[RMDB]
An RNA of 177 nucleotides, treated with 2A3 and DMS and read out base by base.

RNA sequence: GGGAACGACUCGAGUAGAGUCGAAAACUGCUGUGACACCCGCAAAGCUGUUCAGCAGAUUGAGAAGUGGGUGUACGUAAAGGGAGAACAAAUACGGUCCCAGCACGGACCCCUGAGGGGCUCCUCGAAUUUAGCCCCAGUUCGCUGGGGCUAAAUUAAAAGAAACAACAACAACAAC
Reactivity to 2A3 in 0.01 (KOAc 150mM, MgCl2 10mM, bicine 150mM(pH8.5), 24C), signal-to-noise 3, nucleotides 027 to 126: c020u010g050c020u040g040u120g080a000c000a000c000c000c000g020c040a050a110a030g040c040u040g000u160u120c080a110g000c000a000g060a070u070u230g150a120g070a190a050g000u060g020g030g000u060g030u030a020c000g010u080a020a070a110g030g060g000a200g060a180a030c040a060a260a060u190a070c050g030g030u020c000c010c000a000g020c020a010c020g020g090a040c040c000c020c050u030g030a090g000g070g020g000c110u050c020c000u000c020g020
Reactivity to DMS in 0.01 (KOAc 150mM, MgCl2 10mM, bicine 150mM(pH8.5), 24C), signal-to-noise 2, nucleotides 027 to 126: c070u000g010c040u000g000u030g000a010c040a000c020c000c010g000c110a110a130a110g000c060u010g000u020u030c110a100g000c040a010g010a070u010u050g010a200g030a120a070g020u000g000g000g000u000g020u000a030c020g000u010a040a160a130g000g010g010a060g010a100a100c110a050a020a050u010a140c210g010g000u010c000c010c010a050g000c170a080c100g000g000a160c030c020c040c010u020g000a120g020g000g000g020c040u030c030c010u010c120g010
The 2A3 profile rests on 1,078 reads. The DMS profile rests on 2,579 reads. The RNA was probed in 150 mM KOAc, 10 mM MgCl2 and 150 mM bicine (pH 8.5) at 24 C.